RNA sequence: GGGAACGACUCGAGUAGAGUCGAAAAAGAUGUUGAGGCUGACAGCCCAUUUUUGAAGGCCCUUCAGAAAGCAUUCCCGGCUUUUGAGGUUGAAUCACAGCAGGUCACACCUAAUGACCAUGCUAAUUUUUAUCAGAAAAUUCGUUUUCUGAUAAAAAAAAGAAACAACAACAACAAC
Reactivity to DMS in 0.01 (KOAc 150mM, MgCl2 10mM, bicine 150mM(pH8.5), 24C), signal-to-noise 3, nucleotides 027 to 126: a100g000a150u010g010u030u000g010a090g020g010c020u010g000a260c130a110g000c110c070c070a060u010u010u020u010u010g000a100a270g000g000c010c030c050u000u000c050a150g000a100a020a030g000c050a070u000u010c020c020c010g000g000c050u000u000u000u000g010a080g000g030u010u000g020a030a250u020c040a090c130a040g010c010a020g000g010u000c000a020c110a110c210c140u040a090a100u000g000a030c000c020a100u000g000c010u020a050a020u000